The data come from the RNA Mapping Database (RMDB), library TTRDES. Chemical mapping of a 177-nucleotide RNA with DMS. The DMS profile rests on 1,340 reads.
RNA sequence: GGGAACGACUCGAGUAGAGUCGAAAAGAUAUGGAACACCUGGAGGCUCUCAUUGCCGUUGAAACCUCCUCGGAAACGAGGAGGUGGAGGCAAUACGCGAGAGCCGAUGAAAGGUGUUCCUAAGUCAGAUGGGUAAGUUGUUCGCAACUUACCCAUCAAAAGAAACAACAACAACAAC
Reactivity to DMS in 0.01 (KOAc 150mM, MgCl2 10mM, bicine 150mM(pH8.5), 24C), signal-to-noise 2, nucleotides 027 to 126: g000a030u000a300u000g010g000a000a000c000a010c000c000u000g010g000a030g050g020c030u000c000u000c000a090u000u000g000c010c000g030u010u000g000a200a250a040c000c000u000c000c000u000c020g010g020a120a090a270c010g000a020g020g000a000g000g000u000g060g000a040g000g010c000a000a000u000a050c300g010c270g010a000g000a020g010c000c000g000a010u010g000a070a130a010g000g010u000g000u000u000c000c000u000a020a110g000u000c060a180